RNA sequence: GGGAACGACUCGAGUAGAGUCGAAAACGUGCUCUCUUCGGAGAGCACGAAAGAAAGCACAAAGCACCAAAUAAAGCAGGUGCAGGGUGCAACCACCAAUAAAAAGAAGUAGGUUCGCCUACUUCAAGUACUAUAUGAGCUUCGGCUCAUAUAGUACAAAAGAAACAACAACAACAAC
Reactivity to DMS in 0.01 (KOAc 150mM, MgCl2 10mM, bicine 150mM(pH8.5), 24C), signal-to-noise 3, nucleotides 027 to 126: c020g020u000g010c000u010c000u010c000u000u010c170g020g020a010g000a010g020c000a000c000g000a000a070a090g010a140a110a160g000c000a010c010a100a170a130g010c010a000c000c000a090a110a140u010a090a130a100g000c240a090g000g030u000g010c000a040g000g000g010u000g000c000a050a100c100c080a160c080c130a040a090u000a020a060a040a100a080g010a020a000g000u000a000g010g010u010u010c220g000c010c000u000a010c000u000u000c000a020a070
Reactivity to 2A3 in 0.01 (KOAc 150mM, MgCl2 10mM, bicine 150mM(pH8.5), 24C), signal-to-noise 5, nucleotides 027 to 126: c000g000u000g000c000u010c000u010c000u060u050c170g060g000a000g000a000g000c000a000c000g000a010a000a000g010a010a030a010g000c000a010c000a020a090a010g010c000a010c000c020a060a100a090u290a120a210a040g130c210a080g010g000u000g000c000a000g010g050g010u010g000c000a040a020c020c010a030c010c040a050a090u220a200a100a030a010a010g010a000a000g010u000a000g020g050u020u060c220g120c030c000u000a000c000u000u000c000a000a000
This 177-nucleotide RNA was probed chemically with DMS and 2A3. Conditions: 150 mM KOAc, 10 mM MgCl2 and 150 mM bicine (pH 8.5), 24 C. 2A3 adducts were read by reverse transcription with SuperScript II with manganese. Source: RMDB library M2PK50, as collected in RNAgym.